[RMDB]
RNA sequence: GGGAACGACUCGAGUAGAGUCGAAAAGACGCCUGUGUGGCGAAGCGAGCAUGAGAUGGAGCCGCAAGAGAAGAUGAGAUAGAAGCGGCAAGAUAGAUUGCUCGCUAAAAGAUCCAUCUCACAGAGAAUAUGGGACGAUGUUCGCAUCGUCCCAUAUAAAAGAAACAACAACAACAAC
Reactivity to DMS in 0.01 (KOAc 150mM, MgCl2 10mM, bicine 150mM(pH8.5), 24C), signal-to-noise 2, nucleotides 027 to 126: g060a200c080g050c030c000u010g000u040g000u000g030g000c000g000a150a040g000c000g000a000g040c000a000u000g000a300g000a000u000g000g010a300g000c020c000g000c050a090a160g000a140g060a090a080g000a120u000g040a160g050a140u050a100g030a060a080g020c000g000g000c030a010a110g000a010u000a030g020a120u000u010g010c010u000c010g060c000u000a000a000a030a030g000a100u010c010c040a040u000c000u000c030a070c000a110g020a100g000a160
Reactivity to 2A3 in 0.01 (KOAc 150mM, MgCl2 10mM, bicine 150mM(pH8.5), 24C), signal-to-noise 1, nucleotides 027 to 126: g150a000c030g030c000c000u200g050u080g080u080g180g000c000g000a010a000g000c000g000a000g000c000a020u020g000a080g020a050u020g000g040a000g000c020c010g000c140a000a010g110a000g090a120a150g140a010u300g050a000g000a070u170a100g140a120a020g000c000g000g000c000a000a010g000a020u040a000g110a060u080u000g000c000u000c010g000c000u000a010a010a000a010g020a000u000c000c000a110u010c010u030c000a170c000a070g040a000g090a160